[RMDB]
RNA sequence: GGGAACGACUCGAGUAGAGUCGAAAACACGUGUGGAAGAGGAAACAGGAGAUUGGUGUGAAAGGAGAAAAUCUGCUUCUCCCCGACUUAUGGCUAGAUUUCCUACAACUCAGCCCCAUCUUCCAGCGCAAGCUUGCUGCCGUUAUUGCCUGUGUCCCAGAGUAGGUAGAUUCGUCUACCUACUCUGAAAAGAAACAACAACAACAAC
Reactivity to DMS in 0.01 (KOAc 150mM, MgCl2 10mM, bicine 150mM(pH8.5), 24C), signal-to-noise 4, nucleotides 027 to 156: c060a060c040g020u000g020u010g000g010a080a050g010a090g030g000a130a070a180c090a110g000g010a080g000a080u010u010g030g030u010g010u020g000a070a110a080g010g010a070g000a050a050a070a120u010c070u010g010c110u000u000c020u000c020c010c010c020g010a100c070u000u000a060u010g020g020c020u010a050g020a130u000u000u000c040c020u010a080c070a050a070c050u000c050a100g000c020c010c020c020a110u000c040u010u000c010c010a100g010c060g040c060a090a120g020c040u010u000g020c020u000g020c020c020g020u000u000a030u000u000g000c020c010u000g000u000g010u000c030c050
Reactivity to 2A3 in 0.01 (KOAc 150mM, MgCl2 10mM, bicine 150mM(pH8.5), 24C), signal-to-noise 6, nucleotides 027 to 156: c080a000c020g060u130g010u060g070g020a050a010g020a020g030g050a080a070a020c060a060g060g010a030g020a090u060u080g030g030u060g020u050g080a090a060a040g020g010a020g030a030a070a010a040u110c080u110g070c050u080u000c000u010c010c000c010c010g060a060c060u100u100a040u120g020g000c000u010a030g000a070u040u070u070c030c010u080a080c050a120a050c040u050c080a030g020c020c000c020c000a050u000c000u080u000c000c010a030g000c050g000c070a060a030g030c010u020u050g010c000u030g030c030c010g030u030u050a050u060u060g000c000c000u040g010u020g040u060c010c010
Source: RMDB library OK3TST, as collected in RNAgym. This 207-nucleotide RNA was probed chemically with DMS and 2A3.